The record gives the reactivity of an RNA of 207 nucleotides to 2A3 and DMS. The RNA was probed in 150 mM KOAc, 10 mM MgCl2 and 150 mM bicine (pH 8.5) at 24 C. DMS adducts were read by reverse transcription with MarathonRT. The 2A3 profile rests on 1,461 reads.
RNA sequence: GGGAACGACUCGAGUAGAGUCGAAAAAAUUAGAGGCAAUUUGAAAUAAUUUAAAUUAGCUUAACCCUACUGCACUUACCGAACUAGAUAACGGUGUAGUAGGGGUAAAUUCUCCGCAUUCGGUGCGCAACCACCUGAGGUUUCGACCUCAGGUGAACAUAGUUAUUUACUUCGGUAAAUAACUAUGAAAAGAAACAACAACAACAAC
Reactivity to 2A3 in 0.01 (KOAc 150mM, MgCl2 10mM, bicine 150mM(pH8.5), 24C), signal-to-noise 2, nucleotides 027 to 156: a000a010u250u170a090g020a060g040g000c010a000a020u020u050u070g060a150a120a080u230a160a250u150u120u160a020a060a020u040u010a060g000c000u030u000a020a020c000c000c000u000a000c000u010g010c000a000c000u030u040a020c050c080g060a120a020c050u050a140g050a130u120a290a050c100g000g000u000g010u000a000g000u000a000g000g000g000g000u000a000a000a000u020u010c030u000c000c000g010c000a010u020u050c070g150g010u010g000c000g010c030a040a060c040c000a000c000c000u000g000a000g050g010u030u040u140c200g090a050c010c000u000c000a000g000g000u000g000a000a000
Reactivity to DMS in 0.01 (KOAc 150mM, MgCl2 10mM, bicine 150mM(pH8.5), 24C), signal-to-noise 1, nucleotides 027 to 156: a060a090u000u010a060g010a120g000g040c030a060a050u000u000u000g020a100a080a200u010a100a210u000u000u010a010a010a080u000u000a080g050c060u000u000a050a000c000c000c000u010a030c010u010g000c040a030c010u000u000a050c040c000g000a050a160c140u000a130g010a160u030a080a090c170g010g010u010g040u000a020g020u000a030g030g030g020g020u000a040a030a090u000u000c010u010c030c100g000c050a140u000u010c060g020g000u000g030c000g020c080a070a190c120c010a000c000c010u000g040a040g030g000u000u000u000c230g000a030c000c010u000c000a010g000g000u000g000a050a050